[RMDB]
RNA sequence: GGGAACGACUCGAGUAGAGUCGAAAAUAUUUAUCAGCAAACUACGUUUGGCUACUGUCUAGUUAGUUAAAAAGAGAUUUAUAGACUCGCUAUGUGAGGGCUUGAGUUAUGUGUCAUCACCUAGUUAAAUCAAUACAUAACCUAUAGUUGUAGACAACGGUGCUUAUGUGUUCGCACAUAAGCACCGAAAAGAAACAACAACAACAAC
Reactivity to 2A3 in 0.01 (KOAc 150mM, MgCl2 10mM, bicine 150mM(pH8.5), 24C), signal-to-noise 1, nucleotides 027 to 156: u100a010u040u140u060a140u030c020a010g050c060a150a000a010c010u070a010c070g060u100u130u040g000g000c000u000a020c020u130g030u000c030u000a000g060u090u050a040g040u050u090a130a070a070a030a000g090a010g040a060u100u300u110a170u100a030g020a020c000u010c030g000c000u000a000u010g000u000g020a000g040g000g050c010u030u000g010a110g030u000u000a000u010g030u010g000u000c000a000u010c000a000c000c000u000a040g000u000u020a010a040a050u060c070a010a010u030a110c020a020u000a000a030c000c000u060a060u060a250g000u000u000g040u040a020g020a100c000a050a050
The record gives the reactivity of an RNA of 207 nucleotides to 2A3. The data come from the RNA Mapping Database (RMDB), library ARCHII. The reactions ran in a buffer of 150 mM KOAc, 10 mM MgCl2 and 150 mM bicine (pH 8.5), at 24 C.